[RMDB]
RNA sequence: GGGAACGACUCGAGUAGAGUCGAAAACUCCAUUAGUUACGGAGAACGAAUUCAGCGGCUUGGAAGGGUAGGUCGCAUACAGAAGGGCACCGCACUUCGGAUAGGUCACACUGAGAAAGGGCUAAUAAUCAUAGUGUUAGUUCGCUAACACUAUGAUAAAAGAAACAACAACAACAAC
Reactivity to 2A3 in 0.01 (KOAc 150mM, MgCl2 10mM, bicine 150mM(pH8.5), 24C), signal-to-noise 9, nucleotides 027 to 126: c010u010c010c010a060u090u140a060g110u090u110a070c070g030g030a050g020a070a030c070g060a060a090u100u070c020a030g020c020g060g010c020u050u120g090g080a080a040g080g030g020u090a050g020g030u040c050g000c030a010u100a040c040a020g160a070a070g050g010g000c030a020c030c010g040c050a030c020u110u110c030g020g040a070u080a060g000g030u030c020a020c010a000c060u040g020a010g060a100a050a020g040g010g000c030u040a040a040u140a130
Reactivity to DMS in 0.01 (KOAc 150mM, MgCl2 10mM, bicine 150mM(pH8.5), 24C), signal-to-noise 9, nucleotides 027 to 126: c030u010c010c030a110u020u020a090g010u020u020a070c120g000g000a040g010a100a110c110g000a070a090u020u010c050a070g010c090g010g000c040u000u010g010g010a130a050g000g000g010u000a060g000g010u010c070g010c050a070u010a070c130a110g010a100a090g000g000g000c010a070c040c040g000c080a040c030u000u010c050g020g000a100u020a050g010g000u000c020a070c060a140c040u010g000a080g000a050a070a060g000g000g010c050u010a050a070u030a090